[RMDB]
RNA sequence: GGGAACGACUCGAGUAGAGUCGAAAACAGCGUCAUUGACGCUGACGGUACAGGCCAGACUAUUAUUGUCUGGUAUAGUGCAACAGCAGAACAAUUUGCUGAGGGCUAUUGAGGCGCAACAGCAUCUUGUACAUUCAUAGUUCGCUAUGAAUGUACAAAAAGAAACAACAACAACAAC
Reactivity to DMS in 0.01 (KOAc 150mM, MgCl2 10mM, bicine 150mM(pH8.5), 24C), signal-to-noise 5, nucleotides 027 to 126: c000a020g010c020g000u010c010a220u030u060g020a020c010g010c010u010g010a040c120g010g020u000a030c070a150g020g010c000c010a000g000a010c000u000a110u020u040a090u040u000g000u000c000u000g000g000u000a010u010a050g020u000g010c030a140a130c080a070g000c040a050g020a080a130c190a100a130u020u000u000g000c000u000g010a210g010g010g030c000u020a150u020u030g000a120g000g000c020g010c110a050a090c070a040g010c110a040u010c100u020
Reactivity to 2A3 in 0.01 (KOAc 150mM, MgCl2 10mM, bicine 150mM(pH8.5), 24C), signal-to-noise 9, nucleotides 027 to 126: c010a000g010c000g030u020c110a300u050u300g010a000c000g000c000u000g010a030c080g030g010u040a020c010a040g090g070c000c000a000g000a000c010u030a070u300u050a130u230u270g000u000c000u000g000g000u010a000u020a000g020u020g020c030a090a080c010a070g090c020a010g060a110a050c070a120a140u050u080u090g000c010u000g020a080g020g060g000c010u020a070u090u260g080a080g050g000c050g000c050a040a110c010a060g010c000a040u010c030u020
The record gives the reactivity of an RNA of 177 nucleotides to DMS and 2A3.
For 2A3 the reverse transcriptase was SuperScript II with manganese.
Conditions: 150 mM KOAc, 10 mM MgCl2 and 150 mM bicine (pH 8.5), 24 C.